The record gives the reactivity of an RNA of 177 nucleotides to DMS and 2A3.
For 2A3 the reverse transcriptase was SuperScript II with manganese.
RNA sequence: GGGAACGACUCGAGUAGAGUCGAAAAUACUUUUGGUGCUAUUUCCGCCUCUAUUGGAGACAUCAUACAACGUCUUGAUGUUCUCGAACAGGACGCCCAAAUAGACAGACUUAUUAAUGGCCGUUUGAAAGUUAUUCACCUUCGGGUGAAUAACUUUAAAAGAAACAACAACAACAAC
Reactivity to DMS in 0.01 (KOAc 150mM, MgCl2 10mM, bicine 150mM(pH8.5), 24C), signal-to-noise 2, nucleotides 027 to 126: u030a040c070u010u010u010u040g020g060u000g000c000u000a190u000u010u010c050c130g000c040c030u020c070u010a090u010u000g000g000a040g010a060c010a020u040c000a030u030a120c090a160a140c270g000u010c060u000u000g020a030u000g010u090u000c010u000c000g000a090a070c110a070g010g040a010c150g020c050c030c090a010a030a030u020a030g000a050c150a100g000a040c040u000u000a100u000u020a070a180u010g010g030c030c060g020u020u000u000g030
Reactivity to 2A3 in 0.01 (KOAc 150mM, MgCl2 10mM, bicine 150mM(pH8.5), 24C), signal-to-noise 3, nucleotides 027 to 126: u170a020c110u200u080u040u200g080g000u220g030c000u060a050u040u000u050c060c000g000c010c000u030c030u110a070u020u080g130g000a010g000a000c000a010u000c000a000u050a090c140a200a050c300g110u080c090u080u030g000a000u000g090u300u040c000u000c000g050a060a010c010a020g000g050a000c000g010c000c010c000a010a050a030u060a000g040a020c060a010g000a010c030u090u130a060u070u180a160a090u120g010g020c060c030g050u070u010u080g080